[RMDB]
RNA sequence: GGGAACGACUCGAGUAGAGUCGAAAAUCACCAGAUGCUGCAUCACCUGAUCACUGAUGGCUCAACGGUAUCCGGCGGUACAACUGUAUACUUGUAGCUGCCUUUUGAGCGGGUUGGCUGCAAUCCGAAAAGAGGACACACUUCGGUGUGUCCUCAAGCCGUUGUAACGGUUCGCCGUUACAACGGCAAAAGAAACAACAACAACAAC
Reactivity to 2A3 in 0.01 (KOAc 150mM, MgCl2 10mM, bicine 150mM(pH8.5), 24C), signal-to-noise 1, nucleotides 027 to 156: u070c040a040c000c000a010g030a000u090g050c020u020g010c000a010u000c010a010c000c000u000g010a020u070c020a010c030u010g010a040u040g040g020c050u040c050a070a080c020g030g010u000a000u040c040c010g000g040c050g020g090u040a070c050a150a040c150u020g090u080a100u000a080c020u020u030g000u000a050g000c010u020g000c000c020u020u060u010u010g030a030g010c060g000g000g010u140u200g090g030c050u000g030c000a000a120u070c000c000g060a010a010a010a010g010a000g000g000a000c000a000c000a000c000u020u090c120g050g000u000g000u000g080u040c000c000u010c000a020a000